[RMDB]
RNA sequence: GGGAACGACUCGAGUAGAGUCGAAAAUUAGCCGGAGAGGUCUCAUAGUAUAAUCAUAUGGCAUGUGUGGUCGAAGGUCACAGACUAUGGAGCCCUAGAUCCAAUCUGAUACAGAGCAUCCUACCGCGAGAGUAACUCCAUUCGUGGAGUUAUUUUCAAAAGAAACAACAACAACAAC
Reactivity to 2A3 in 0.01 (KOAc 150mM, MgCl2 10mM, bicine 150mM(pH8.5), 24C), signal-to-noise 9, nucleotides 027 to 126: u050u020a020g040c030c010g010g020a100g000a010g030g040u000c010u000c030a080u090a050g070u060a060u070a200a100u080c060a040u070a070u220g130g000c060a040u100g070u010g020u020g060g040u030c050g070a110a030g040g000u040c020a020c020a090g080a050c060u090a120u120g070g030a030g020c000c010c000u050a050g010a060u000c020c010a020a070u030c040u050g010a010u020a100c040a020g040a010g030c010a030u030c000c010u020a060c020c030g050c050
Reactivity to DMS in 0.01 (KOAc 150mM, MgCl2 10mM, bicine 150mM(pH8.5), 24C), signal-to-noise 9, nucleotides 027 to 126: u010u010a090g020c120c050g010g010a120g010a090g010g010u000c020u000c030a050u000a080g010u000a100u010a110a090u010c070a070u000a100u010g010g010c110a060u010g010u000g020u000g010g010u000c030g010a120a160g010g010u000c060a100c060a070g010a060c100u010a060u000g010g010a140g000c030c020c030u000a130g000a060u000c030c040a070a100u000c050u000g000a090u000a060c070a070g000a070g010c080a060u000c020c020u000a090c080c070g010c190